RNA sequence: GGGAACGACUCGAGUAGAGUCGAAAAGUCUAGCGAUUUAGGGAUCCGAUCCGGGUGGCAGAACUCAACUGCAUGAGUAUACACGCAAGUCGCGUAUUGGCCGACCGGCCAAGGAUCUGCUAGACGAGGUACGCCUAUCAUUCGUGAUAGGCGUACCAAAAGAAACAACAACAACAAC
Reactivity to 2A3 in 0.01 (KOAc 150mM, MgCl2 10mM, bicine 150mM(pH8.5), 24C), signal-to-noise 2, nucleotides 027 to 126: g000u000c000u000a010g000c040g100a140u050u150u300a210g080g070g030a010u000c000c010g000a010u000c000c000g010g050g000u090g000g020c020a020g060a080a030c000u010c000a050a100c100u180g000c080a120u050g020a000g030u010a030u030a090c110a000c020g000c080a150a150g190u270c050g010c030g000u000a070u060u150g130g050c000c000g000a050c000c010g000g010c050c040a020a020g000g000a000u000c010u000g030c000u000a000g010a010c010g000a010
Reactivity to DMS in 0.01 (KOAc 150mM, MgCl2 10mM, bicine 150mM(pH8.5), 24C), signal-to-noise 1, nucleotides 027 to 126: g020u010c010u000a010g010c000g010a160u010u010u010a130g010g010g000a000u000c020c010g010a260u000c020c000g010g000g050u000g010g020c000a060g010a020a070c020u000c020a030a080c170u010g050c260a120u010g010a090g010u010a120u000a050c060a000c020g000c020a130a100g000u030c020g020c020g010u000a030u000u000g040g010c000c000g000a020c030c010g030g010c130c120a070a290g020g000a010u000c010u010g040c000u000a030g000a020c000g000a060

An RNA of 177 nucleotides, treated with 2A3 and DMS and read out base by base. Reactivities are given for positions 27 through 126. 2A3 adducts were read by reverse transcription with SuperScript II with manganese. The DMS profile rests on 765 reads. The 2A3 profile rests on 1,711 reads. It was measured as part of the RMDB library OK2TRN.